[RMDB]
RNA sequence: GGGAACGACUCGAGUAGAGUCGAAAAUAGCAGUCUUUCGAGACUGCUACAUUAAUAGUCGCUAGAAAACCAUCAAAACUAGCGACUAACAUAACGAUCGAAAAGACGCACCCUUCGGGGUGCGUAAGGAAUAUCUGAGAUUCGUCUCAGAUAUUCCAAAAGAAACAACAACAACAAC
Reactivity to 2A3 in 0.01 (KOAc 150mM, MgCl2 10mM, bicine 150mM(pH8.5), 24C), signal-to-noise 2, nucleotides 027 to 126: u030a000g000c000a010g010u000c020u000u070u110c180g060a030g000a000c000u000g000c010u020a010c010a000u020u060a000a060u000a010g010u010c000g000c000u010a010g020a100a190a050a140c100c060a140u190c000a070a100a040a110c010u000a000g000c000g000a000c000u000a000a010c000a010u180a080a080c050g110a130u180c070g060a040a070a040a030g120a010c010g020c000a010c020c000c000u010u040c250g050g030g010g040u000g030c000g010u000a000a000
Reactivity to DMS in 0.01 (KOAc 150mM, MgCl2 10mM, bicine 150mM(pH8.5), 24C), signal-to-noise 2, nucleotides 027 to 126: u000a010g000c000a020g010u000c010u000u000u020c130g030a040g000a000c000u000g010c000u000a010c070a040u030u000a050a090u000a000g010u020c000g030c000u000a000g010a090a050a140a180c170c100a110u010c150a090a100a070a150c000u000a000g010c000g010a010c000u000a000a030c140a130u010a060a030c230g000a140u030c140g010a090a070a080a140g000a050c000g010c000a000c000c000c000u000u000c180g020g000g030g010u000g000c000g010u000a000a060
Annotation:
An RNA of 177 nucleotides, treated with 2A3 and DMS and read out base by base. 2A3 adducts were read by reverse transcription with SuperScript II with manganese. The RNA was probed in 150 mM KOAc, 10 mM MgCl2 and 150 mM bicine (pH 8.5) at 24 C. Values cover nucleotides 27 to 126.